[RMDB]
RNA sequence: GGGAACGACUCGAGUAGAGUCGAAAAUGCGUGUCUGGAUGAUCCGAGAAGUUCGUAAAUGCUGCUGAUUCUCCAUGUCAUGGGUUCGCAACAAGGUUCUGGAGAUGAUCGUAGCGAACUUGGAAAAGCAUGAUGCGAUGUUCGCAUCGCAUCAUGCAAAAGAAACAACAACAACAAC
Reactivity to DMS in 0.01 (KOAc 150mM, MgCl2 10mM, bicine 150mM(pH8.5), 24C), signal-to-noise 2, nucleotides 027 to 126: u000g000c060g020u000g070u000c010u010g000g020a180u000g000a070u020c040c010g000a230g000a090a060g000u010u010c080g010u010a020a120a130u010g020c030u000g000c050u010g000a150u030u000c040u010c020c030a070u000g010u010c080a080u000g000g010g000u000u000c130g010c110a140a060c070a070a060g000g010u000u010c120u000g010g010a050g010a050u000g010a120u000c170g000u000a060g030c000g000a010a020c030u000u010g000g010a130a090a090a090
Reactivity to 2A3 in 0.01 (KOAc 150mM, MgCl2 10mM, bicine 150mM(pH8.5), 24C), signal-to-noise 2, nucleotides 027 to 126: u080g010c030g030u060g020u030c020u060g040g060a040u080g000a040u030c010c010g010a010g030a130a020g030u030u070c030g010u080a030a100a150u240g020c030u020g020c000u020g010a020u010u050c000u000c000c000a020u110g060u000c030a070u070g030g000g070u100u100c080g050c070a050a080c020a050a100g050g040u130u000c030u060g050g040a080g000a000u030g010a010u030c040g010u010a020g020c010g020a010a000c000u010u010g060g070a060a060a020a010